[RMDB]
Chemical mapping of a 177-nucleotide RNA with 2A3 and DMS.
The DMS profile rests on 7,443 reads.
2A3 adducts were read by reverse transcription with SuperScript II with manganese.
Reactivities are given for positions 27 through 126.
The 2A3 profile rests on 3,325 reads.
Values are in units of 0.01, from 0 to 300, in steps of 10.
The reactions ran in a buffer of 150 mM KOAc, 10 mM MgCl2 and 150 mM bicine (pH 8.5), at 24 C.

RNA sequence: GGGAACGACUCGAGUAGAGUCGAAAAGAAGAGGGAUCUGCUGGAGCACAAUUGCGCAAGUAUAUGGAUCGAUAUGCAAAACUUGGAGCAAUUGCUUUUACUAACGCACUUACCGGUGUCGAUUAUAACGGUCCUUUAUAUUCGUAUAAAGGACCGUAAAAGAAACAACAACAACAAC
Reactivity to 2A3 in 0.01 (KOAc 150mM, MgCl2 10mM, bicine 150mM(pH8.5), 24C), signal-to-noise 5, nucleotides 027 to 126: g070a010a000g030a040g020g010g000a050u020c030u040g030c050u070g040g010a020g020c030a010c020a090a070u000u010g000c030g000c010a020a000g020u020a080u010a040u150g110g030a070u140c090g070a070u170a050u290g120c050a040a070a050a060c000u010u020g050g030a220g020c000a010a010u040u020g010c010u080u050u050u060a060c050u050a060a060c040g010c020a010c030u050u120a060c020c040g000g010u010g030u060c050g080a130u070u040a140u140a110
Reactivity to DMS in 0.01 (KOAc 150mM, MgCl2 10mM, bicine 150mM(pH8.5), 24C), signal-to-noise 4, nucleotides 027 to 126: g000a050a050g000a070g000g020g010a050u000c060u010g030c080u010g000g000a060g000c120a140c090a020a030u000u010g030c010g010c030a020a000g020u010a010u020a060u010g000g010a060u040c300g010a120u010a060u000g010c060a060a130a050a040c030u000u000g010g000a210g030c000a000a000u000u020g020c160u010u000u000u030a090c230u020a060a060c070g010c050a060c030u000u020a070c210c110g010g000u000g020u030c040g010a070u030u000a090u000a110